[RMDB]
Notes
Chemical mapping of a 177-nucleotide RNA with 2A3 and DMS. Conditions: 150 mM KOAc, 10 mM MgCl2 and 150 mM bicine (pH 8.5), 24 C. The 2A3 profile rests on 2,995 reads.

RNA sequence: GGGAACGACUCGAGUAGAGUCGAAAAAAUAUGCUCGACAGGCUGCCUGUCCGACAGAGCUUUUAGAUCUUCUGAUCUUUCCCUGCAGCAUAUCGCUUAUGCAUCAAGCGAUUGUCGCAUCACACAAAUCUCUAGCACUUUUCGAAGUGCUAGAGAUAAAAGAAACAACAACAACAAC
Reactivity to 2A3 in 0.01 (KOAc 150mM, MgCl2 10mM, bicine 150mM(pH8.5), 24C), signal-to-noise 3, nucleotides 027 to 126: a000a000u200a050u080g010c030u020c020g030a010c010a020g000g010c090u120g200c010c020u000g030u060c030c010g030a000c020a030g020a020g030c000u010u000u010u010a010g000a000u020c010u300u060c160u300g010a000u000c000u010u000u000c000c000c020u020g010c030a030g030c010a030u040a020u300c010g020c010u030u070a080u230g120c060a130u190c100a040a000g000c000g000a010u000u000g050u040c010g000c000a030u120c020a020c000a000c030a050a200
Reactivity to DMS in 0.01 (KOAc 150mM, MgCl2 10mM, bicine 150mM(pH8.5), 24C), signal-to-noise 3, nucleotides 027 to 126: a080a050u010a050u000g000c110u000c030g020a020c040a030g000g020c190u000g020c050c010u010g020u010c030c070g000a030c060a040g000a130g010c230u000u000u000u000a000g000a010u000c000u010u010c270u010g010a000u000c010u000u000u000c000c000c000u010g020c010a040g020c020a010u010a010u000c010g000c000u000u000a070u010g020c220a110u010c120a040a010g020c010g010a020u000u000g010u000c030g040c010a030u020c170a060c200a120c210a090a070